[RMDB]
RNA sequence: GGGAACGACUCGAGUAGAGUCGAAAAGAAAGAAAGUACUGAAAGUAUUGUGGGAAAUAAUGUGUAAAUCAUUGACCGUUCCUGCGCUGGUAAGAAUAAAAUUUUAGUCCAGACACCACCGGUAUAACCAAUCUAGUGACCUUCGGGUCACUAGAAACAUAGAGCAUUUGUUCGCAAAUGCUCUAUGAAAAGAAACAACAACAACAAC
Reactivity to DMS in 0.01 (KOAc 150mM, MgCl2 10mM, bicine 150mM(pH8.5), 24C), signal-to-noise 2, nucleotides 027 to 156: g000a150a060a140g010a190a030a090g030u000a120c060u000g020a150a130a130g020u000a030u000u010g020u000g030g000g000a090a060a050u000a020a020u010g040u000g040u020a100a080a260u000c020a030u000u000g000a060c010c020g030u000u000c030c030u000g040c050g040c030u000g020g020u000a080a100g020a060a060u000a050a080a070a300u000u000u010u000a140g010u000c020c020a060g000a130c090a050c010c000a030c100c040g000g000u000a020u000a050a050c080c030a060a240u000c010u000a020g020u020g000a010c010c000u020u000c300g020g010g020u010c000a000c000u000a010g000a010a030a090
Reactivity to 2A3 in 0.01 (KOAc 150mM, MgCl2 10mM, bicine 150mM(pH8.5), 24C), signal-to-noise 1, nucleotides 027 to 156: g050a030a090a020g030a060a110a000g020u040a030c040u040g050a150a120a040g100u130a140u240u180g010u000g000g020g030a020a040a000u030a010a020u010g000u010g010u030a030a060a000u040c020a010u000u020g010a020c010c010g020u100u100c020c020u040g010c020g000c010u010g000g010u030a020a030g030a060a020u120a110a160a110a110u050u070u010u040a000g010u000c000c000a000g010a030c010a040c030c000a000c010c010g000g020u060a060u050a110a030c060c040a070a070u010c000u000a000g000u000g000a000c000c000u020u060c300g080g010g000u000c000a000c000u000a000g000a000a000a000
This 207-nucleotide RNA was probed chemically with DMS and 2A3. The RNA was probed in 150 mM KOAc, 10 mM MgCl2 and 150 mM bicine (pH 8.5) at 24 C. It was measured as part of the RMDB library M2RFPK. Reactivities are rounded to 0.1 and cut off at 0 and 3. For DMS the reverse transcriptase was MarathonRT. For 2A3 the reverse transcriptase was SuperScript II with manganese.